[RMDB]
RNA sequence: GGGAACGACUCGAGUAGAGUCGAAAAAACUUCAAGGGCCCCGGCGUUGCCCUGGGGAUGUACAACACUGAAGCCUCCAUCAGGGGGUUCGCUCUCAGUUCCUUUCAGUUCGCUUUGAAGGAGGAGAGUGUACACCAUAUUUCGAUAUGGUGUACACAAAAGAAACAACAACAACAAC
Reactivity to 2A3 in 0.01 (KOAc 150mM, MgCl2 10mM, bicine 150mM(pH8.5), 24C), signal-to-noise 1, nucleotides 027 to 126: a000a000c050u050u020c020a050a050g110g000g000c040c000c040c060g080g000c050g250u260u300g000c000c020c000u020g000g000g010g020a020u060g090u150a090c090a160a000c030a090c100u000g030a040a020g030c000c000u000c020c040a240u240c140a170g000g010g000g030g040u050u060c060g010c000u000c010u000c010a070g060u080u050c020c000u080u160u000c020a040g000u010u080c050g050c150u060u120u150g010a020a040g030g000a020g000g080a060g000a010
Reactivity to DMS in 0.01 (KOAc 150mM, MgCl2 10mM, bicine 150mM(pH8.5), 24C), signal-to-noise 2, nucleotides 027 to 126: a060a050c020u010u000c010a090a040g030g000g000c050c040c010c050g000g000c080g030u000u000g000c110c050c020u000g040g020g040g000a080u010g020u010a060c110a050a120c080a060c070u000g000a070a070g010c010c010u000c010c010a170u010c240a140g000g000g000g010g010u000u000c050g000c020u010c000u000c030a120g020u000u000c010c000u000u010u000c160a040g000u000u000c190g010c070u010u000u020g000a020a030g020g000a050g000g020a080g000a070
This 177-nucleotide RNA was probed chemically with 2A3 and DMS. DMS adducts were read by reverse transcription with MarathonRT. Values cover nucleotides 27 to 126.